[RMDB]
RNA sequence: GGGAACGACUCGAGUAGAGUCGAAAAGCAUGCCGUUAAAUACUGCUUCACAGUGCUCGCUCACUGAGAAAGUUUCCACUGAAAGAUAUUAACAGUAAUUAUGAGUACUUCAGUGGAAUCUCUAACGGGGAGGAUGUUCUUUCGAGAACAUCCUCCCAAAAGAAACAACAACAACAAC
Reactivity to 2A3 in 0.01 (KOAc 150mM, MgCl2 10mM, bicine 150mM(pH8.5), 24C), signal-to-noise 1, nucleotides 027 to 126: g000c000a060u110g000c000c000g000u030u020a060a050a000u210a000c070u040g080c030u010u010c090a040c000a020g000u000g120c000u030c000g000c080u170c000a000c000u120g070a000g060a130a060a030g000u000u000u000c050c000a000c000u000g050a000a300a000g150a000u170a030u050u070a050a040c000a060g090u280a050a000u190u300a070u170g070a000g000u040a000c000u000u000c000a000g000u000g000g000a000a000u000c000u070c060u000a030a030c040g000
The record gives the reactivity of an RNA of 177 nucleotides to 2A3. It was measured as part of the RMDB library RFM100. Values cover nucleotides 27 to 126.